[RMDB]
RNA sequence: GGGAACGACUCGAGUAGAGUCGAAAAGUUGCUGGAUUUCAAGGAAAUUUACACAGAACACAAGGUCGAGCACCUGACCACCCAGGGCGCACGCUGCAUGGAUUGCGGAGUGCCUUUUUGCCAGUCGCGUACUUGCUUGGUUCGCCAAGCAAGUACGAAAAGAAACAACAACAACAAC
Reactivity to 2A3 in 0.01 (KOAc 150mM, MgCl2 10mM, bicine 150mM(pH8.5), 24C), signal-to-noise 2, nucleotides 027 to 126: g070u050u030g020c000u020g000g020a080u060u000u090c090a170a130g110g020a090a000a030u080u070u120a080c180a020c000a040g050a090a010c010a020c030a130a060g010g020u010c020g100a020g000c020a020c040c000u010g000a020c050c010a000c030c000c000a010g000g050g000c040g000c000a000c040g020c010u070g000c010a110u130g160g240a150u100u080g000c000g030g000a160g010u010g070c000c000u030u140u000u060u040g050c030c010a050g110u120c100g000
Reactivity to DMS in 0.01 (KOAc 150mM, MgCl2 10mM, bicine 150mM(pH8.5), 24C), signal-to-noise 3, nucleotides 027 to 126: g010u010u000g010c020u000g010g000a100u000u000u000c040a130a110g000g010a050a080a090u000u020u010a100c170a100c110a100g030a050a070c100a080c100a040a040g000g030u010c030g010a080g000c080a050c040c030u030g000a080c100c050a110c010c020c020a100g000g000g060c120g020c020a030c040g020c020u000g000c050a060u010g010g000a090u020u010g010c000g000g000a070g020u000g000c020c010u000u000u000u010u000g020c040c030a040g020u010c130g000